[RMDB]
RNA sequence: GGGAACGACUCGAGUAGAGUCGAAAACAUCGCGACGGCCAAUGGUUUCGGGAACCCCAGUACAGGCAGGCUGGGACUUCCCUCUUUAACACCAGGCCCACCCCGCUCACAGCGACGGGCCAGGCUUGCUAGAUAAAUACUUCGGUAUUUAUCUAGCAAAAGAAACAACAACAACAAC
Reactivity to DMS in 0.01 (KOAc 150mM, MgCl2 10mM, bicine 150mM(pH8.5), 24C), signal-to-noise 2, nucleotides 027 to 126: c070a070u010c040g010c030g010a070c110g020g050c010c030a130a070u000g000g000u000u000u000c210g030g000g010a020a060c120c000c010c000a050g030u000a120c050a070g020g040c140a070g000g000c010u010g000g000g000a060c220u000u010c000c000c010u000c090u020u010u000a070a080c220a060c030c000a050g070g000c000c000c040a070c150c120c040c000g020c020u010c220a220c180a100g010c000g010a020c130g000g010g000c020c030a090g000g000c090u010u000
Reactivity to 2A3 in 0.01 (KOAc 150mM, MgCl2 10mM, bicine 150mM(pH8.5), 24C), signal-to-noise 2, nucleotides 027 to 126: c030a070u130c040g000c060g130a060c080g050g000c000c020a060a130u080g030g030u020u120u180c050g010g000g000a010a010c000c000c000c000a000g030u090a210c020a050g070g120c010a030g030g040c030u010g000g000g010a000c010u010u000c010c010c020u010c040u040u150u060a100a030c060a010c000c020a010g000g000c000c000c000a010c000c010c000c000g000c010u060c020a170c050a070g010c000g020a030c020g000g000g000c000c000a010g010g010c000u020u050
Structure probing data (DMS and 2A3) for a 177-nucleotide construct. Conditions: 150 mM KOAc, 10 mM MgCl2 and 150 mM bicine (pH 8.5), 24 C. For DMS, 923 sequencing reads were counted.